[RMDB]
This 177-nucleotide RNA was probed chemically with DMS and 2A3. DMS adducts were read by reverse transcription with MarathonRT. The RNA was probed in 150 mM KOAc, 10 mM MgCl2 and 150 mM bicine (pH 8.5) at 24 C. Source: RMDB library OK1LIB, as collected in RNAgym.
RNA sequence: GGGAACGACUCGAGUAGAGUCGAAAAUAAACCAGGCGGAUCACACUUUCGAGGGCACCUGUCGAAUGGGCGGACAGGAGCACUUCUAUCUGGAGACCCAUGCUGCAUUGGCGGUACCUCGUGACAGCACGAUGCAUACCUUCGGGUAUGCAUCGUGAAAAGAAACAACAACAACAAC
Reactivity to DMS in 0.01 (KOAc 150mM, MgCl2 10mM, bicine 150mM(pH8.5), 24C), signal-to-noise 1, nucleotides 027 to 126: u010a070a110a110c000c050a100g000g000c020g000g000a030u000c040a080c100a050c120u000u020u000c030g000a050g000g000g000c040a050c000c000u010g020u020c050g000a090a110u050g010g020g030c030g000g010a020c030a010g000g050a060g020c110a020c050u000u000c050u000a090u000c080u000g000g000a100g030a220c030c000c010a100u000g030c110u010g020c040a030u060u030g020g000c080g010g000u000a030c000c030u000c050g000u000g000a050c120a140g030
Reactivity to 2A3 in 0.01 (KOAc 150mM, MgCl2 10mM, bicine 150mM(pH8.5), 24C), signal-to-noise 3, nucleotides 027 to 126: u120a030a050a000c000c000a010g020g060c000g030g000a000u010c000a020c030a020c080u130u220u200c040g010a010g020g040g000c060a030c030c000u020g000u030c000g050a100a080u100g030g120g060c040g040g020a020c020a020g010g020a020g000c030a050c080u080u000c000u040a220u000c030u100g040g020a020g030a040c040c030c010a010u060g020c010u040g000c010a030u090u000g020g000c000g000g030u030a050c000c000u060c020g050u060g040a060c030a030g040